[RMDB]
RNA sequence: GGGAACGACUCGAGUAGAGUCGAAAAGGGUGAUGUCUCCUAACCUUUAUCAAUGGGGGCACUCGGUCGUGCUGUGGGUAGAAAUUUUAUUUCGUGCCUACCUUAGACGCUUGUCGUCGGGAGUACGUGGGACUGAUGAACUUCGGUUCAUCAGUAACGCGGAGAUAUUGUUCGCAAUAUCUCCGCGAAAAGAAACAACAACAACAAC
Reactivity to 2A3 in 0.01 (KOAc 150mM, MgCl2 10mM, bicine 150mM(pH8.5), 24C), signal-to-noise 6, nucleotides 027 to 156: g040g010g020u060g020a060u040g020u000c010u010c020c000u030a080a120c020c020u120u190u150a180u150c070a060a110u170g000g020g000g000g000c000a020c000u020c010g060g000u020c010g010u010g030c040u060g040u090g010g020g000u030a030g130a030a060a030u180u280u180u180a140u050u150u040c040g030u110g000c010c010u030a050c010c000u050u050a040g000a000c000g010c060u140u280g150u300c010g020u000c010g000g040g000a020g030u030a030c030g010u080g030g010g020a010c000u000g000a000u000g000a000a000c000u020u040c140g050g000u010u000c000a000u000c000a000g000u000a010a020
Reactivity to DMS in 0.01 (KOAc 150mM, MgCl2 10mM, bicine 150mM(pH8.5), 24C), signal-to-noise 2, nucleotides 027 to 156: g020g030g040u000g020a060u020g010u000c010u000c010c000u000a110a120c050c040u000u000u010a130u000c120a070a080u010g020g050g020g000g040c000a060c040u000c020g040g020u000c030g010u010g030c030u010g020u000g010g010g030u000a140g000a050a050a060u010u000u010u000a090u010u050u000c000g020u000g010c010c000u000a080c010c040u000u000a160g010a030c030g030c040u000u010g030u020c000g000u000c030g020g000g010a120g000u000a010c050g010u000g030g010g030a060c010u000g010a010u010g000a000a000c010u010u010c300g060g000u020u000c000a000u000c000a000g020u010a020a170